An RNA of 177 nucleotides, treated with DMS and read out base by base. The RNA was probed in 150 mM KOAc, 10 mM MgCl2 and 150 mM bicine (pH 8.5) at 24 C.
RNA sequence: GGGAACGACUCGAGUAGAGUCGAAAAUUUCCUCAGCCAGCCGGUGUGUCAAUCUUGGUUAGUGCCGGCAACUCAGGGAGGAAAGUGGAAUUGGGGCAAAGGACCCCCCAUAUGAAAGAUGGCAUCACGAAAGGAAUAGCUUCGGCUAUUCCUUUCGAAAAGAAACAACAACAACAAC
Reactivity to DMS in 0.01 (KOAc 150mM, MgCl2 10mM, bicine 150mM(pH8.5), 24C), signal-to-noise 1, nucleotides 027 to 126: u010u030u010c000c000u000c060a140g000c060c050a090g060c040c000g000g020u000g010u010g000u000c090a080a120u010c150u030u010g010g020u000u010a060g020u000g040c000c000g000g040c020a040a020c130u010c160a130g000g000g010a020g000g010a020a090a090g060u000g000g000a140a080u000u000g000g000g000g020c150a050a030a190g000g010a190c020c020c030c010c000c030a080u000a020u010g000a110a090a060g000a130u000g010g020c050a190u000c130a270